[RMDB]
RNA sequence: GGGAACGACUCGAGUAGAGUCGAAAAGAUUUAAACAGAUGGAGAUACACAAAUGUUUGAAUCCCAGUAACAAAAAUCCUGGUAUCUCGGGUAAACAGUAGUGCAGAUACUGUAUUUUUAAUGCUCCUUAGGUUUUCCAUCUUCGGAUGGAAAACAAGUCAGGAUGUUGAUUCGUCAACAUCCUGACAAAAGAAACAACAACAACAAC
Reactivity to 2A3 in 0.01 (KOAc 150mM, MgCl2 10mM, bicine 150mM(pH8.5), 24C), signal-to-noise 1, nucleotides 027 to 156: g000a010u010u040u020a010a000a000c000a000g050a050u040g020g000a040g000a050u050a010c000a000c030a030a160a050u000g000u040u000u010g000a050a020u000c000c020c000a050g050u130a100a180c080a050a180a000a000a000u010c010c010u010g000g000u020a000u000c000u000c010g000g000g000u040a080a030a000c000a000g060u070a000g020u080g160c080a020g070a180u030a090c000u020g050u020a090u010u020u020u020u060a110a100u070g030c070u140c030c030u060u080a040g150g000u050u010u000u000c000c010a000u000c000u020u010c070g100g000a000u000g000g000a000a000a000a000c000a010a000
An RNA of 207 nucleotides, treated with 2A3 and read out base by base.